[RMDB]
RNA sequence: GGGAACGACUCGAGUAGAGUCGAAAAGAUAUGGACCUCUUCUAACGUAUUAGGACAUGUCUCGACGAUCGGAAACGAUCGUCUUUGGAGACAACAGCCUACGGUACGUUAGAAGAGGUCCUAAGUCCUAGACGAUUAAGUUCGCUUAAUCGUCUAGAAAAGAAACAACAACAACAAC
Reactivity to DMS in 0.01 (KOAc 150mM, MgCl2 10mM, bicine 150mM(pH8.5), 24C), signal-to-noise 8, nucleotides 027 to 126: g010a090u010a300u010g000g000a010c000c000u000c000u010u000c000u000a000a010c000g030u000a000u000u010a060g010g010a040c080a220u010g010u010c000u000c000g010a010c000g010a010u000c000g000g010a140a130a210c000g020a010u000c000g010u000c000u010u000u010g030g010a000g000a030c000a020a110c300a170g010c010c010u020a050c300g020g000u000a000c000g000u000u000a010g010a010a000g000a000g010g000u000c000c000u000a020a090g010u010c060